[RMDB]
RNA sequence: GGGAACGACUCGAGUAGAGUCGAAAAGUGCGCUUCCAGGAGAUGAAGCUGCAGGAACGUGCAAUCGAGGUGCCGCAGGGGGCGACGCCGCGCAGCCUGGUGAUUCACCUGCGCAGCAGCCUGACGCCUUACGCACCCUUUUCGAAGGGUGCGUAAGAAAAGAAACAACAACAACAAC
Reactivity to 2A3 in 0.01 (KOAc 150mM, MgCl2 10mM, bicine 150mM(pH8.5), 24C), signal-to-noise 1, nucleotides 027 to 126: g070u030g000c030g010c060u010u030c000c030a080g070g120a070g020a070u220g050a060a060g030c100u080g060c020a010g140g020a090a050c080g050u050g010c060a010a020u070c080g030a040g020g060u050g030c030c030g010c040a080g000g020g000g050g000c020g030a060c060g020c000c020g050c020g000c020a000g060c020c020u100g050g010u060g040a140u160u050c030a010c020c000u020g010c000g000c000a010g000c010a010g010c000c000u050g020a060c050g010c000
Reactivity to DMS in 0.01 (KOAc 150mM, MgCl2 10mM, bicine 150mM(pH8.5), 24C), signal-to-noise 2, nucleotides 027 to 126: g010u020g000c050g000c010u000u000c050c000a140g010g010a130g020a120u010g010a070a080g000c020u010g050c010a090g030g020a060a050c150g020u000g020c070a080a080u010c080g010a030g000g000u020g010c050c100g010c110a090g010g020g000g000g020c070g010a080c130g020c010c040g000c020g000c050a050g000c150c030u010g020g010u010g000a190u010u010c040a060c090c000u000g000c020g000c040a010g040c010a130g000c010c060u070g000a130c130g020c060